Structure probing data (2A3 and DMS) for a 177-nucleotide construct. Values cover nucleotides 27 to 126. The DMS profile rests on 1,111 reads. It was measured as part of the RMDB library OK2TRN.
[RMDB]
RNA sequence: GGGAACGACUCGAGUAGAGUCGAAAACUGAGGGCUAUUUACCCGCCUGGCCGCAGCUUGGCGCAAGCCUGAUGUAUGAACAGUAUUAUGGCGAUGAAGUCGGGCUGUUUGGUAAAGAUAAGCGCCACGUAAUCCUUCGGUUCGCCGAAGGAUUACGAAAAGAAACAACAACAACAAC
Reactivity to 2A3 in 0.01 (KOAc 150mM, MgCl2 10mM, bicine 150mM(pH8.5), 24C), signal-to-noise 1, nucleotides 027 to 126: c090u100g010a160g050g000g050c040u030a070u070u130u080a040c020c040c010g000c000c010u060g070g000c000c010g110c040a080g000c010u040u060g020g040c000g000c120a060a010g000c000c000u010g000a020u100g040u010a050u150g050a180a100c030a080g120u030a070u280u000a160u130g080g000c030g040a110u080g050a110a000g020u040c000g010g010g000c000u020g010u040u080u070g000g010u110a090a070a000g020a020u120a070a060g050c070g100c120c000a020
Reactivity to DMS in 0.01 (KOAc 150mM, MgCl2 10mM, bicine 150mM(pH8.5), 24C), signal-to-noise 2, nucleotides 027 to 126: c030u000g020a090g000g000g030c110u020a100u000u020u000a080c040c010c140g000c030c020u000g020g010c000c230g010c120a090g010c040u000u010g010g000c010g000c070a070a100g000c010c000u000g000a030u020g010u020a060u000g020a090a150c200a150g010u000a130u000u010a140u000g020g000c040g000a190u000g010a060a140g000u000c050g020g000g000c000u000g010u000u000u010g030g000u000a030a020a050g000a170u020a070a130g010c040g010c040c010a120